[RMDB]
RNA sequence: GGGAACGACUCGAGUAGAGUCGAAAAUUGUCAGUGUAGAGCUACAACCUCCUUGCAAAUUCUUGAUUGCGGGACCAAAAGGACCUGAAAUCCGAUAUCUCUAUUUUGUUAAAAAUCUUAACAACCUGAUACGUUAGAAGUUCGCUUCUAACGUAUCAAAAGAAACAACAACAACAAC
Reactivity to 2A3 in 0.01 (KOAc 150mM, MgCl2 10mM, bicine 150mM(pH8.5), 24C), signal-to-noise 2, nucleotides 027 to 126: u060u020g030u070c040a040g000u000g040u070a020g010a020g070c030u030a030c010a020a030c000c010u010c020c020u030u130g000c010a030a040a160u220u070c070u130u230g090a100u040u060g010c010g000g000g000a000c000c000a000a220a040a050g000g000a020c020c060u120g040a080a030a010u020c010c000g000a020u050a080u040c020u000c000u010a090u100u150u020u040g010u000u010a040a040a040a040a030u030c040u030u030a020a000c020a010a020c000c040u030
Reactivity to DMS in 0.01 (KOAc 150mM, MgCl2 10mM, bicine 150mM(pH8.5), 24C), signal-to-noise 1, nucleotides 027 to 126: u010u010g000u000c110a040g020u010g040u000a080g000a050g000c100u000a070c030a000a140c090c090u000c030c010u000u030g040c050a030a070a130u010u000c150u000u020g050a080u020u010g000c030g040g000g000a090c080c060a050a070a070a170g000g000a030c030c030u030g030a050a120a140u000c030c220g030a040u020a020u010c030u000c020u000a040u010u010u010u010g000u000u000a000a000a130a100a080u020c080u020u000a010a030c030a020a110c300c090u040
The record gives the reactivity of an RNA of 177 nucleotides to 2A3 and DMS.
2A3 adducts were read by reverse transcription with SuperScript II with manganese.
The DMS profile rests on 718 reads.
The RNA was probed in 150 mM KOAc, 10 mM MgCl2 and 150 mM bicine (pH 8.5) at 24 C.
Reactivities are given for positions 27 through 126.
DMS adducts were read by reverse transcription with MarathonRT.